[RMDB]
RNA sequence: GGGAACGACUCGAGUAGAGUCGAAAAACAUACGGCACUCAGUUUACACUUACAUUACAUAUGCAUUUUAACACAUCAACUAUAACACCUUUAUUUAAGUCUGUUGUGGACCAUAGAAUAUGGUAAACAGUUGUUUUUAGUUCGCUAAAAACAACUGAAAAGAAACAACAACAACAAC
Reactivity to DMS in 0.01 (KOAc 150mM, MgCl2 10mM, bicine 150mM(pH8.5), 24C), signal-to-noise 2, nucleotides 027 to 126: a070c050a060u000a030c060g010g030c020a030c060u020c060a110g030u010u000u000a070c060a050c080u000u020a070c060a030u000u000a060c080a020u010a070u010g010c030a040u000u030u000u000a060a090c050a070c040a040u000c050a040a130c110u000a080u000a040a040c080a060c050c010u000u010u010a070u030u020u030a050a070g020u010c110u000g020u000u010g030u000g000g020a050c010c000a020u000a100g000a080a060u010a050u000g000g000u000a040a070a150
Reactivity to 2A3 in 0.01 (KOAc 150mM, MgCl2 10mM, bicine 150mM(pH8.5), 24C), signal-to-noise 3, nucleotides 027 to 126: a000c040a050u110a040c030g030g000c020a010c030u050c020a050g000u060u080u080a020c040a020c020u020u090a030c010a100u050u080a030c020a040u110a040u150g020c060a080u000u040u010u130a040a020c010a000c000a080u070c020a030a050c030u030a030u030a160a010c030a060c040c000u100u100u010a140u060u140u080a120a040g030u000c040u030g000u010u020g000u010g020g040a000c000c000a010u030a040g160a180a080u110a040u060g030g000u030a040a040a010